[RMDB]
RNA sequence: GGGAACGACUCGAGUAGAGUCGAAAAGUCUUUAGUAACUGAUAUCGAAAUGGCUAUGACAAGUGGUCUAUUGAGCUUGUUAUCAGAGAUGAUUAACAAAACUUCAGGCAUAAGCAUUGAGCAAUUGGAACUCUCUCGCUUUCGAGCGAGAGAGUUCAAAAGAAACAACAACAACAAC
Reactivity to 2A3 in 0.01 (KOAc 150mM, MgCl2 10mM, bicine 150mM(pH8.5), 24C), signal-to-noise 1, nucleotides 027 to 126: g000u070c050u000u050u060a000g000u000a000a300c020u020g000a000u000a000u060c000g000a000a240a000u170g030g000c000u030a000u000g000a080c080a180a000g000u000g060g000u060c050u160a080u000u000g090a000g090c080u090u090g000u000u050a000u000c000a060g110a090g000a280u000g150a000u160u150a030a000c070a170a020a060a000c050u000u000c030a050g000g090c030a000u080a060a060g020c110a180u020u110g020a020g200c120a060a150u090u140g140
About this RNA: Chemical mapping of a 177-nucleotide RNA with 2A3. The reactions ran in a buffer of 150 mM KOAc, 10 mM MgCl2 and 150 mM bicine (pH 8.5), at 24 C. The data come from the RNA Mapping Database (RMDB), library OK1LIB. For 2A3 the reverse transcriptase was SuperScript II with manganese. Values cover nucleotides 27 to 126.